[RMDB]
RNA sequence: GGGAACGACUCGAGUAGAGUCGAAAAGUCUCCUGUGUGUUGCCGCGGGUUCUGCAUCAGCGUGGUAGGGUCUGUCCCUGGAGUCGAGAAAGAGGAUUGCACCUUUGACAUUACAGGCUCAUAUUCAGGCCAUUUAACGAUUCGUCGUUAAAUGGCCAAAAGAAACAACAACAACAAC
Reactivity to DMS in 0.01 (KOAc 150mM, MgCl2 10mM, bicine 150mM(pH8.5), 24C), signal-to-noise 2, nucleotides 027 to 126: g000u000c040u000c000c020u000g010u010g010u030g000u000u000g020c090c050g010c090g000g020g000u020u000c050u000g000c020a090u010c070a080g030c070g050u000g020g010u000a120g020g000g000u000c030u030g010u000c010c000c020u000g000g010a060g000u000c010g050a150g020a060a140a100g020a060g010g000a130u000u010g000c110a200c020c000u020u000u000g040a230c070a090u000u000a090c090a070g020g000c080u000c140a040u000a130u050u000c210a090